[RMDB]
Background
Chemical mapping of a 207-nucleotide RNA with DMS and 2A3. Source: RMDB library OK3TST, as collected in RNAgym. Values are in units of 0.01, from 0 to 300, in steps of 10. For DMS the reverse transcriptase was MarathonRT. 2A3 adducts were read by reverse transcription with SuperScript II with manganese.
RNA sequence: GGGAACGACUCGAGUAGAGUCGAAAACUAGUGAGAACAAUGCAAAUGGACAGAGAAAUUAAAAUGUGUUCCCUGCUGAGGGACUUGUGAGUGGCCCUGGGUAGCUAGUAUGCAGUGCUCAUUAGAAGCCAAAGCUGAAAAGGUAUACUUGGGUCUAUAAUCCGAGCAUAUUCGUAUGCUCGGAUUAAAAAGAAACAACAACAACAAC
Reactivity to DMS in 0.01 (KOAc 150mM, MgCl2 10mM, bicine 150mM(pH8.5), 24C), signal-to-noise 2, nucleotides 027 to 156: c020u000a060g020u010g000a120g000a050a090c030a070a100u000g040c030a030a130a110u010g010g030a080c040a090g010a040g040a090a060a150u010u000a030a040a120a170u010g080u000g000u000u000c010c000c000u000g030c020u010g000a100g020g010g000a020c030u000u000g040u000g000a070g040u000g050g000c030c010c030u000g030g010g050u000a080g000c030u010a060g000u000a080u000g010c040a130g010u000g020c010u000c030a140u000u010a090g000a050a110g020c010c040a020a090a170g000c020u020g010a120a100a090a100g010g010u010a060u000a050c040u000u000g000g030g000u000c030u000a170
Reactivity to 2A3 in 0.01 (KOAc 150mM, MgCl2 10mM, bicine 150mM(pH8.5), 24C), signal-to-noise 2, nucleotides 027 to 156: c040u030a000g020u040g060a110g050a070a010c090a180a100u070g050c020a020a020a200u100g010g000a020c030a070g090a020g050a090a140a060u160u140a090a130a110a120u120g070u020g000u040u020c030c010c010u060g060c070u040g050a090g000g030g010a020c040u080u080g050u040g050a090g060u100g000g020c050c070c020u020g030g030g000u020a000g020c010u010a010g100u000a090u120g020c000a000g010u010g110c000u000c040a030u120u150a100g090a180a000g010c000c060a120a060a020g000c000u010g050a000a040a070a050g020g050u080a010u000a070c000u010u000g020g000g000u000c020u000a020